[RMDB]
RNA sequence: GGGAACGACUCGAGUAGAGUCGAAAACGUCUAUUCGUAGACGACAACGCGUACUACUAGCAAUGAUGCCACGUAAGUCGAUAAGGAUUCCCAAAUAGGAAUCCUUUUGACGACUUCGUGGUUGAGCUAGUAUCGCCCGGUUCCAAUUCGUUGGAAACUUGGUCAAAAUAUUCGUAUUUUGACCAAGAAAAGAAACAACAACAACAAC
Reactivity to DMS in 0.01 (KOAc 150mM, MgCl2 10mM, bicine 150mM(pH8.5), 24C), signal-to-noise 3, nucleotides 027 to 156: c020g010u000c010u000a040u000u010c250g020u000a040g010a040c010g000a110c030a070a030c010g000c080g040u000a180c130u000a030c000u000a010g010c020a070a060u000g000a060u000g000c000c000a020c010g010u010a010a010g020u000c000g000a170u000a030a020g030g010a030u000u000c000c000c010a050a170a270u010a040g000g010a030a010u000c000c000u000u000u000u000g010a190c080g000a010c010u010u000c000g020u010g000g020u010u000g000a020g020c000u000a010g010u000a010u000c040g000c020c050c010g010g000u000u000c010c000a040a170u000u000c100g000u000u000g010g000a070a060a130
Reactivity to 2A3 in 0.01 (KOAc 150mM, MgCl2 10mM, bicine 150mM(pH8.5), 24C), signal-to-noise 4, nucleotides 027 to 156: c010g000u000c010u020a030u060u070c240g130u060a000g000a010c010g030a050c080a090a070c090g020c020g060u100a100c020u000a000c000u010a040g000c020a090a300u150g050a040u110g040c000c010a010c020g090u260a020a010g000u000c010g030a050u020a090a010g000g000a010u010u010c040c020c050a150a220a060u290a060g000g000a000a000u010c010c000u000u010u020u050g140a060c000g000a000c000u010u000c010g010u000g030g000u000u010g000a000g000c010u010a000g000u000a010u160c020g020c010c030c040g050g050u040u000c000c020a050a130u160u130c140g010u040u030g070g030a150a100a110
The data come from the RNA Mapping Database (RMDB), library RNAMAK. Chemical mapping of a 207-nucleotide RNA with DMS and 2A3. High 2A3 reactivity points to a flexible backbone, as in loops and unpaired stretches. For DMS the reverse transcriptase was MarathonRT. For DMS, 8,367 sequencing reads were counted. Reactivities are given for positions 27 through 156. Conditions: 150 mM KOAc, 10 mM MgCl2 and 150 mM bicine (pH 8.5), 24 C.